[RMDB]
RNA sequence: GGGAACGACUCGAGUAGAGUCGAAAAAUCAGUCUCUUUGAUGAGGUAGCGAAAUGAUUGAACACCACCAAGGUUACACGGCUAUUAAACGGUACGGACGGAAUAGUUUUAGACCAGCAGGCAAACACCCGUUUAAGAUGAUUCACAAUGCACGAGACGUAUGACUAAAUUUCGAUUUAGUCAUACGAAAAGAAACAACAACAACAAC
Reactivity to 2A3 in 0.01 (KOAc 150mM, MgCl2 10mM, bicine 150mM(pH8.5), 24C), signal-to-noise 6, nucleotides 027 to 156: a000u070c030a010g070u000c010u010c000u090u080u140g160a170u090g020a030g030g040u070a040g030c040g080a080a040a090u140g030a060u060u080g030a090a020c030a030c070c000a030c020c040a070a050g030g000u040u040a030c030a010c050g020g000c010u020a030u120u110a090a100a030c040g030g010u080a020c040g020g040a010c020g020g040a070a050u090a070g040u050u060u070u090a040g020a040c000c000a020g060c040a020g050g000c030a030a050a000c030a050c020c010c020g020u030u040u030a030a040g040a060u090g010a030u040u040c060a020c040a170a080u130g070c090a040c090g090a100g020a020
Reactivity to DMS in 0.01 (KOAc 150mM, MgCl2 10mM, bicine 150mM(pH8.5), 24C), signal-to-noise 4, nucleotides 027 to 156: a130u000c020a130g020u000c030u010c020u010u000u010g010a120u010g010a100g040g030u010a070g020c060g000a100a090a080u000g030a120u000u000g000a150a100c020a070c020c010a080c020c040a050a110g030g010u000u000a100c050a100c060g020g000c020u000a070u000u000a050a040a090c070g040g000u000a060c080g020g010a110c060g020g030a050a050u000a060g010u000u010u010u000a090g010a100c020c030a080g030c050a080g010g010c020a060a070a110c070a080c060c000c030g020u000u000u000a050a070g010a060u000g000a110u000u000c050a010c020a050a100u000g000c030a050c040g000a150g020a180